[RMDB]
RNA sequence: GGGAACGACUCGAGUAGAGUCGAAAAGAUAUGGAUAUCCUACUCUGGCGAUGAAACAUUUCGGAAACGAAAUGUGGAGCCAUUGUAGGAGUAUCCUAAGUCAAAGGCAGGCGUUCGCGCCUGCCAACUGACGUGUAUAGUUCGCUAUACACGUCAGAAAAGAAACAACAACAACAAC
Reactivity to 2A3 in 0.01 (KOAc 150mM, MgCl2 10mM, bicine 150mM(pH8.5), 24C), signal-to-noise 2, nucleotides 027 to 126: g010a020u160a050u160g000g000a000u010a020u050c000c000u010a010c000u000c010u020g000g000c020g300a300u040g030a020a020a000c000a000u000u020u000c010g010g060a090a100a070c030g010a000a000a000u000g020u010g000g000a010g030c000c010a000u010u000g000u000a010g010g050a020g000u000a000u000c000c000u030a090a030g050u020c040a070a080a120g000g000c020a000g030g020c000g080u170u250c300g010c050g150c170c010u010g000c000c000a020a000
Reactivity to DMS in 0.01 (KOAc 150mM, MgCl2 10mM, bicine 150mM(pH8.5), 24C), signal-to-noise 2, nucleotides 027 to 126: g010a060u000a300u010g000g000a060u010a060u000c010c000u000a010c010u000c050u000g060g040c010g000a080u010g000a170a200a020c000a010u010u010u000c010g000g000a150a150a250c000g000a000a000a000u000g010u000g010g000a050g020c000c000a000u000u000g000u000a000g000g000a030g030u010a000u000c000c000u000a070a140g000u010c030a070a120a170g000g010c000a010g010g010c000g020u000u020c270g020c000g000c000c010u000g000c020c010a030a050